[RMDB]
The record gives the reactivity of an RNA of 207 nucleotides to 2A3.
The data come from the RNA Mapping Database (RMDB), library OK3TST.
Reactivities are given for positions 27 through 156.
For 2A3, 646 sequencing reads were counted.

RNA sequence: GGGAACGACUCGAGUAGAGUCGAAAAGUAGGAGUGGCCGCGAUGCGAUGGGCGCCGUACCGUAAAUUUAGAGCAUUGGUUAGACCGAAGGAGAAUACGAGAUCUUGAUAGAAUCAUCGCGUCAUCCGCAUAACAGAUAUCAGAGUUCUAGAGAGCACGUGUACCCCUAGUUCGCUAGGGGUACACGAAAAGAAACAACAACAACAAC
Reactivity to 2A3 in 0.01 (KOAc 150mM, MgCl2 10mM, bicine 150mM(pH8.5), 24C), signal-to-noise 2, nucleotides 027 to 156: g140u140a070g000g040a040g000u080g070g050c140c000g020c010g000a020u020g000c010g050a020u060g000g020g020c030g090c110c030g020u010a080c000c030g050u100a070a130a050u140u190u100a090g040a010g040c100a020u070u080g020g070u060u090a030g070a180c050c030g020a070a000g090g030a000g010a090a090u190a120c080g030a000g030a150u020c030u130u040g050a030u030a080g120a100a020u130c020a000u000c000g000c000g000u010c010a020u020c000c000g040c020a000u090a240a100c050a050g020a090u050a070u120c000a000g010a000g130u050u030c020u090a060g020a000g000a020g050c080a010